[RMDB]
RNA sequence: GGGAACGACUCGAGUAGAGUCGAAAACAAACAAACAAACAAAUGGUCCGCGAAAUUAGAAAGCACAAAGCACCUAAAAGAAAGGUGCAAAGUGCAGAAGCUAGUCCCGACCUUACUUCUGCCAAAAACGUAAUACUGGCUUCGGCCAGUAUUACGUAAAAGAAACAACAACAACAAC
Reactivity to DMS in 0.01 (KOAc 150mM, MgCl2 10mM, bicine 150mM(pH8.5), 24C), signal-to-noise 2, nucleotides 027 to 126: c040a130a190a110c280a150a030a040c290a130a180a140c180a090a020a000u070g150g000u000c000c060g010c130g000a080a150a110u030u000a040g000a190a210a090g010c010a000c010a000a170a300g000c000a000c000c000u020a180a110a090a050g000a090a050a030g000g070u000g000c000a020a000a000g000u000g000c000a030g000a070a010g000c030u000a030g000u000c080c120c040g000a100c020c050u000u000a100c120u000u000c010u000g000c130c100a050a070a000a030
Reactivity to 2A3 in 0.01 (KOAc 150mM, MgCl2 10mM, bicine 150mM(pH8.5), 24C), signal-to-noise 2, nucleotides 027 to 126: c020a000a080a020c020a020a170a050c120a010a150a000c090a010a070a140u070g050g000u100c060c010g030c060g000a020a020a020u010u030a010g110a060a180a000g040c030a000c000a020a190a000g030c000a000c050c030u100a080a030a080a080g170a070a200a000g000g000u000g000c000a000a000a030g020u030g030c000a000g000a000a000g040c020u020a000g000u060c010c000c000g000a020c000c000u040u040a040c000u070u080c030u020g150c070c010a100a080a000a000